[RMDB]
An RNA of 177 nucleotides, treated with 2A3 and DMS and read out base by base. DMS adducts were read by reverse transcription with MarathonRT. 2A3 adducts were read by reverse transcription with SuperScript II with manganese. The reactions ran in a buffer of 150 mM KOAc, 10 mM MgCl2 and 150 mM bicine (pH 8.5), at 24 C.
RNA sequence: GGGAACGACUCGAGUAGAGUCGAAAACGUACCUGUUGGUAUGUCUCAUUAUAAUGACACUACCUUCUUAAAUGGACAAAUUGCGUCUAGCAAUAAUGAGAUUGAGCAAUAACAGGUCUGUGAUGCCCCCAAAUAGAGCGUUCGCGCUCUAUUUGGGAAAAGAAACAACAACAACAAC
Reactivity to 2A3 in 0.01 (KOAc 150mM, MgCl2 10mM, bicine 150mM(pH8.5), 24C), signal-to-noise 2, nucleotides 027 to 126: c020g000u000a000c000c010u020g000u020u030g030g020u080a070u110g020u000c000u010c000a010u020u050a010u000a000a210u080g020a000c010a000c020u040a060c040c000u050u070c030u050u250a180a250a170u270g000g010a000c040a150a210a100u190u110g020c000g000u000c020u020a040g000c080a080a010u010a000a000u030g010a000g010a030u020u120g040a090g100c050a080a110u040a060a020c000a000g000g000u000c040u030g050u010g020a060u200g070c010c010
Reactivity to DMS in 0.01 (KOAc 150mM, MgCl2 10mM, bicine 150mM(pH8.5), 24C), signal-to-noise 1, nucleotides 027 to 126: c060g010u000a010c010c000u000g030u000u000g000g030u010a140u000g010u000c010u010c000a000u000u000a030u000a180a130u020g000a030c010a000c000u000a130c130c080u000u000c140u020u000a080a100a100u010g010g010a030c210a140a060a080u000u000g010c000g030u000c000u000a040g050c190a140a000u000a010a000u000g000a000g000a010u010u000g010a100g000c140a120a040u000a010a020c010a020g010g020u000c030u010g010u000g000a070u000g000c040c030